[RMDB]
Conditions: 150 mM KOAc, 10 mM MgCl2 and 150 mM bicine (pH 8.5), 24 C. Structure probing data (2A3 and DMS) for a 177-nucleotide construct. For 2A3, 1,388 sequencing reads were counted.

RNA sequence: GGGAACGACUCGAGUAGAGUCGAAAAGGCGACCUGAAUCGGCUGGCAUCGGGUGCCAACCUGUUGGCCGACAAUCUCGGUGACGUUCGCGGUCAAGUCAGCCGGGCCGUUGCGGGUGUCCGCAGCCGUUCACACGGAAGUUCGCUUCCGUGUGAACAAAAGAAACAACAACAACAAC
Reactivity to 2A3 in 0.01 (KOAc 150mM, MgCl2 10mM, bicine 150mM(pH8.5), 24C), signal-to-noise 1, nucleotides 027 to 126: g020g000c030g080a060c010c020u000g040a040a120u070c030g040g010c010u000g020g000c000a060u100c080g060g010g060u050g030c000c000a010a040c010c000u050g060u050u050g090g010c000c010g010a030c020a050a140u060c060u010c020g030g060u100g010a030c060g020u050u120c070g000c040g050g110u000c010a030a030g020u000c040a010g000c000c000g010g020g000c000c000g000u030u000g050c040g080g000g050u260g190u080c040c000g000c010a020g000c010c040
Reactivity to DMS in 0.01 (KOAc 150mM, MgCl2 10mM, bicine 150mM(pH8.5), 24C), signal-to-noise 1, nucleotides 027 to 126: g040g010c000g020a010c030c040u010g000a110a090u010c050g010g020c010u000g010g020c010a180u010c060g010g040g000u020g000c080c070a030a050c020c040u020g010u000u000g030g010c010c010g020a030c060a090a130u010c100u000c050g020g000u000g010a080c090g040u000u010c120g000c040g010g020u000c020a040a140g000u000c030a070g010c010c000g000g000g020c020c050g010u010u010g000c020g000g010g040u000g010u000c010c000g030c030a050g010c070c100